[RMDB]
RNA sequence: GGGAACGACUCGAGUAGAGUCGAAAAGUGUGGACACGCCUGUAGCAACUGUCAUGAUCGACAGGCAUCUGCUCUCCGAGGGUAGGAUCAGCGUGGCGACCAUGAUCGUGGUCGAGUGCGAGGCCGGUGUCGACCGCUGGGCGAACGCCUUCUCGGAAGAGAUCAUGAAUUUCGAUUCAUGAUCUCUAAAAGAAACAACAACAACAAC
Reactivity to DMS in 0.01 (KOAc 150mM, MgCl2 10mM, bicine 150mM(pH8.5), 24C), signal-to-noise 2, nucleotides 027 to 156: g000u020g000u010g010g010a110c090a060c070g020c000c000u020g050u020a120g060c020a150a090c040u000g010u010c020a030u000g000a120u000c010g010a040c010a020g020g030c030a130u000c040u010g000c000u000c010u000c100c110g020a170g030g030g000u000a060g010g010a070u000c070a100g040c020g020u010g000g000c000g020a030c020c000a040u000g000a080u000c250g020u010g010g030u010c020g000a110g020u000g000c090g010a130g030g020c030c100g020g030u000g000u000c020g010a000c000c040g000c040u000g000g020g010c010g020a090a080c100g000c030c020u000u000c000u000c030g000g010a210
Reactivity to 2A3 in 0.01 (KOAc 150mM, MgCl2 10mM, bicine 150mM(pH8.5), 24C), signal-to-noise 5, nucleotides 027 to 156: g050u050g020u040g050g040a030c040a010c100g030c000c040u130g130u250a030g030c030a050a150c070u070g030u080c050a100u100g070a150u130c060g020a010c000a010g030g000c010a030u020c020u020g000c010u020c010u020c060c080g020a180g040g030g050u080a060g100g060a070u070c040a020g030c100g070u050g010g010c000g010a020c010c000a030u090g090a130u150c120g070u060g020g020u050c030g020a050g060u140g020c020g030a030g050g000c060c080g070g020u090g000u030c030g030a010c010c030g020c050u040g030g010g000c050g040a130a040c080g020c000c000u030u030c030u000c000g020g000a050
Record summary:
Chemical mapping of a 207-nucleotide RNA with DMS and 2A3. For DMS the reverse transcriptase was MarathonRT. The 2A3 profile rests on 4,535 reads. Values are in units of 0.01, from 0 to 300, in steps of 10.